[RMDB]
RNA sequence: GGGAACGACUCGAGUAGAGUCGAAAAGACGCCUAAUGGCGAAAAUGUAAAAUCAACUACACAAGAGAUAAAUACAACUGCUAAAUCUCGGAACUAGUUGAUCUAGUCCAGCGGUGAGAUCCGCAGAAUCGUGAGUAUGCUUCGGCAUACUCACGAUAAAAGAAACAACAACAACAAC
Reactivity to DMS in 0.01 (KOAc 150mM, MgCl2 10mM, bicine 150mM(pH8.5), 24C), signal-to-noise 1, nucleotides 027 to 126: g000a220c030g030c000c000u090a110a110u070g000g040c000g000a030a050a200a020u020g000u060a080a080a190a020u000c000a000a000c030u030a000c010a030c110a300a120g000a020g010a000u000a050a080a140u050a150c130a150a100c150u050g010c080u040a000a110a010u000c000u000c000g020g000a190a130c300u000a000g000u000u000g000a000u000c060u000a060g000u000c000c060a040g020c030g000g000u000g000a240g000a170u000c000c030g030c020a100g000a040
Reactivity to 2A3 in 0.01 (KOAc 150mM, MgCl2 10mM, bicine 150mM(pH8.5), 24C), signal-to-noise 2, nucleotides 027 to 126: g080a050c000g000c000c000u300a300a170u300g000g000c040g020a160a130a000a000u210g010u220a000a050a000a190u020c000a000a000c000u010a000c070a000c000a040a020g000a040g010a000u050a060a070a100u180a110c180a260a070c090u080g000c000u100a300a000a000u000c000u000c000g000g000a000a000c000u000a000g000u010u010g000a000u000c000u030a050g100u000c000c040a000g000c000g000g000u060g000a020g000a070u020c000c000g120c000a000g140a050